The data come from the RNA Mapping Database (RMDB), library M2PK90. The record gives the reactivity of an RNA of 177 nucleotides to 2A3 and DMS.
RNA sequence: GGGAACGACUCGAGUAGAGUCGAAAAAGAACUAGCGAUUGUAAAAGGCUGUUUGCGCUAAGAUAUGGAAUUAGCGCAAAUAGCUCCGAAUUCCUUGAUAACAUUUCGGACAACCGCGCUAAAACAAGAUAGUAUAAAACUUCGGUUUUAUACUAUCAAAAGAAACAACAACAACAAC
Reactivity to 2A3 in 0.01 (KOAc 150mM, MgCl2 10mM, bicine 150mM(pH8.5), 24C), signal-to-noise 3, nucleotides 027 to 126: a000g060a030a000c020u030a040g000c000g030a030u000u030g010u030a040a040a020a000g010g010c000u000g020u000u000u010g000c000g000c000u010a010a010g030a160u210a190u300g080g010a100a140u040u000a000g010c000g000c000a010a010a000u000a000g000c000u000c000c000g000a010a030u090u070c030c020u080u090g070a040u060a160a040c050a120u060u040u030c000g000g000a010c010a020a000c030c030g000c010g030c040u110a210a090a030a000c010a040a040
Reactivity to DMS in 0.01 (KOAc 150mM, MgCl2 10mM, bicine 150mM(pH8.5), 24C), signal-to-noise 3, nucleotides 027 to 126: a080g010a120a140c150u010a090g020c010g020a040u000u010g010u000a030a040a270a050g000g010c000u000g000u000u000u000g000c010g010c010u000a010a010g000a120u000a220u010g000g000a100a130u000u000a000g010c010g000c000a000a010a000u000a010g000c000u000c000c000g000a010a030u000u000c070c070u000u000g010a120u020a080a150c140a060u000u000u000c010g000g000a040c000a020a020c040c010g020c010g000c140u000a050a060a050a070c120a100a100
Source information
The 2A3 profile rests on 4,861 reads. The RNA was probed in 150 mM KOAc, 10 mM MgCl2 and 150 mM bicine (pH 8.5) at 24 C.